[RMDB]
RNA sequence: GGGAACGACUCGAGUAGAGUCGAAAAGGAGGAUGAGAAAGCUAGCGAUAAAUAAGGCCUCCGGCGCGCGCGUUAUAAGUAUAAGAGAGAUAGGAAAGCGAUCGCUAUUGCGCGCGCGUGGCGGUUCGCCGCCGCAAAAGAAACAACAACAACAAC
Reactivity to 2A3 in 0.01 (KOAc 150mM, MgCl2 10mM, bicine 150mM(pH8.5), 24C), signal-to-noise 2, nucleotides 027 to 135: g030g010a030g060g060a100u300g080a180g230a200a200a020g110c200u260a110g150c120g190a190u250a250a280a050u260a130a070g150g080c050c010u000c020c080g030g020c020g000c010g010c000g050c030g010u080u080a070u070a300a240g140u160a110u120a300a030g120a010g030a000g020a150u240a190g300g250a250a140a010g170c100g050a020u040c030g040c010u020a050u040u070g000c010g000c010g000c000g000c020g000u000g000g000c010g010g000u010u020c110g000c020c020g000c000c020g000c000a080

An RNA of 155 nucleotides, treated with 2A3 and read out base by base. The reactions ran in a buffer of 150 mM KOAc, 10 mM MgCl2 and 150 mM bicine (pH 8.5), at 24 C. For 2A3 the reverse transcriptase was SuperScript II with manganese. Values cover nucleotides 27 to 135.